[RMDB]
Record summary:
Chemical mapping of a 207-nucleotide RNA with 2A3. Reactivities are rounded to 0.1 and cut off at 0 and 3. Source: RMDB library OK3TST, as collected in RNAgym. Values cover nucleotides 27 to 156.
RNA sequence: GGGAACGACUCGAGUAGAGUCGAAAAAGCAUAUGCUGACUGAUAUUGGUAAGGAAAAUCUUGGCAGGUGUAGACUGUCGACUGCCGAUGAAAUUUUAUCCAUGAUUAAUCCGAAAGGUGCCACAGCGUUAUUUGAUGAGCAAGGAUCUCUGCGUGAGAGACACGCAGGAUUCGUCCUGCGUGUCUCAAAAGAAACAACAACAACAAC
Reactivity to 2A3 in 0.01 (KOAc 150mM, MgCl2 10mM, bicine 150mM(pH8.5), 24C), signal-to-noise 1, nucleotides 027 to 156: a000g210c190a190u200a040u150g000c030u000g010a040c010u090g090a100u150a190u230u050g080g060u010a160a150g060g000a000a110a080a060u040c060u060u060g000g000c050a000g000g060u060g000u130a040g000a150c150u130g090u150c030g010a050c040u000g000c000c000g000a000u140g000a040a130a090u030u180u170u200a060u090c030c030a000u060g000a030u010u210a040a060u000c000c050g090a050a050a130g000g000u010g030c060c000a030c060a030g010c040g000u000u000a010u060u210u190g280a230u000g040a080g020c000a040a030g080g050a130u070c030u010c060u080g000c090g010u090g000a090